[RMDB]
RNA sequence: GGGAACGACUCGAGUAGAGUCGAAAAUUGUGCAUCGUCUAUUCUGCAUCCGCUUCGUCGAAUAAUGUAUAGCAUCGCUUUGAGAUUCUCCAUAGCUAUCAAGUCUUUAUACAAUGACAUGGAAAUAUCUGUGAAUACUUUAUACUUCUCCAACAUCCGGUGGUACAACGUUCGCGUUGUACCACCGAAAAGAAACAACAACAACAAC
Reactivity to 2A3 in 0.01 (KOAc 150mM, MgCl2 10mM, bicine 150mM(pH8.5), 24C), signal-to-noise 2, nucleotides 027 to 156: u050u070g020u040g090c040a070u030c010g110u000c020u030a140u070u040c040u090g070c020a050u020c020c000g050c060u020u020c050g110u000c000g020a040a010u170a110a010u150g120u120a060u000a060g000c000a040u000c080g000c030u050u060u090g070a110g000a150u240u000c000u000c010c050a090u050a100g000c060u040a040u100c070a020a010g040u010c050u000u230u020a070u040a150c050a100a160u160g040a040c020a050u060g020g010a040a070a070u080a050u090c000u000g010u040g010a010a000u060a230c030u020u170u010a080u030a090c000u040u060c000u010c070c040a080a090c000a120u100c070